This 177-nucleotide RNA was probed chemically with DMS and 2A3. For DMS the reverse transcriptase was MarathonRT. The RNA was probed in 150 mM KOAc, 10 mM MgCl2 and 150 mM bicine (pH 8.5) at 24 C.

RNA sequence: GGGAACGACUCGAGUAGAGUCGAAAAAGACCGACUUACGAGUCGGUCAAAUCAGUGAUGAGAAGAGGGUCGUAUGAUUAGUGAUUAGCGCUGGAAAUUCUGAAAACGUCAGCGUACGCGCUGACGACCGGAUUAAUCAUUUCGAUGAUUAAUCCGGAAAAGAAACAACAACAACAAC
Reactivity to DMS in 0.01 (KOAc 150mM, MgCl2 10mM, bicine 150mM(pH8.5), 24C), signal-to-noise 4, nucleotides 027 to 126: a120g000a030c000c000g000a010c000u000u010a110c160g010a050g010u000c000g000g000u020c020a010a030a050u020c080a070g010u010g000a050u020g000a070g020a110a030g010a090g020g000g020u000c030g010u030a050u020g000a060u010u000a060g010u020g010a070u010u010a060g010c050g000c030u000g010g000a070a060a100u010u020c020u000g010a070a050a130a100c020g000u000c000a010g000c010g010u010a050c230g010c000g000c000u000g010a000c000g020a040
Reactivity to 2A3 in 0.01 (KOAc 150mM, MgCl2 10mM, bicine 150mM(pH8.5), 24C), signal-to-noise 6, nucleotides 027 to 126: a000g010a000c000c000g000a000c000u040u060a060c220g100a010g000u000c000g010g000u000c000a010a000a000u020c000a000g130u080g050a100u050g040a030g040a120a010g010a040g020g020g010u020c030g020u100a050u090g040a060u040u080a030g050u020g050a060u070u070a030g030c060g010c070u030g020g060a030a100a060u100u030c040u060g040a050a040a050a070c010g000u000c000a000g000c000g020u020a020c170g000c000g000c040u000g000a000c000g000a010